RNA sequence: GGGAACGACUCGAGUAGAGUCGAAAACAAAGAAAAGGCACCUUCCUUCCGAUAAAAGAGAGAGAGAGAGUAAGGAAGGAAGGUGCGAAAGCGGAAACGCGAAAAGAAAACUCUCUCUCUCUCAAAAGGGUAUACCUAUCUUCGGAUAGGUAUACCCAAAAGAAACAACAACAACAAC
Reactivity to DMS in 0.01 (KOAc 150mM, MgCl2 10mM, bicine 150mM(pH8.5), 24C), signal-to-noise 1, nucleotides 027 to 126: c010a050a170a210g000a050a020a060a260g000g000c000a000c000c000u000u010c040c000u000u030c000c000g000a120u020a040a050a000a130g050a030g000a000g000a000g010a000g000a000g030a020g000u030a030a090g000g000a000a000g010g020a010a000g000g050u000g000c000g050a000a090a040g010c050g000g000a030a060a080c020g000c000g000a090a050a050a210g010a110a020a040a300c000u000c000u000c000u000c000u010c000u020c000u000c000a100a050a130a020